[RMDB]
RNA sequence: GGGAACGACUCGAGUAGAGUCGAAAAGAAGGUCGAGUGCACGACCAGAGAGUGCGGUGAGUGACCGACAAAGAGUUCGAAUCGGAACGAACACCCGCAAACGAUCGACUGAAGAUCGAAGUGAGAAAAUCCACUGGCUAUUCGUAGCCAGUGGAUUAAAAGAAACAACAACAACAAC
Reactivity to DMS in 0.01 (KOAc 150mM, MgCl2 10mM, bicine 150mM(pH8.5), 24C), signal-to-noise 3, nucleotides 027 to 126: g020a130a130g000g020u000c000g000a230g000u020g050c070a030c020g000a020c010c010a100g010a070g040a130g000u000g000c050g000g010u010g010a170g030u030g000a090c000c000g000a150c020a050a060a090g030a150g070u030u000c040g000a160a190u050c070g000g010a190a020c000g000a010a050c060a210c040c000c040g000c120a020a060a100c030g050a100u000c000g000a080c160u020g030a060a170g000a040u000c000g000a070a110g000u040g000a100g010a090a100
Reactivity to 2A3 in 0.01 (KOAc 150mM, MgCl2 10mM, bicine 150mM(pH8.5), 24C), signal-to-noise 3, nucleotides 027 to 126: g120a090a010g120g000u000c000g010a040g100u160g120c070a030c000g000a000c000c020a000g030a000g000a010g070u300g110c010g000g030u160g000a210g020u030g060a140c000c000g000a000c030a070a240a040g160a010g030u060u080c060g030a090a060u140c020g010g120a010a110c020g000a000a000c010a050c000c050c000g010c010a040a030a040c000g040a030u000c070g090a070c100u250g080a080a020g010a050u040c000g060a040a010g120u110g030a080g080a000a090
The record gives the reactivity of an RNA of 177 nucleotides to DMS and 2A3. Values cover nucleotides 27 to 126. The data come from the RNA Mapping Database (RMDB), library OK1LIB. Conditions: 150 mM KOAc, 10 mM MgCl2 and 150 mM bicine (pH 8.5), 24 C.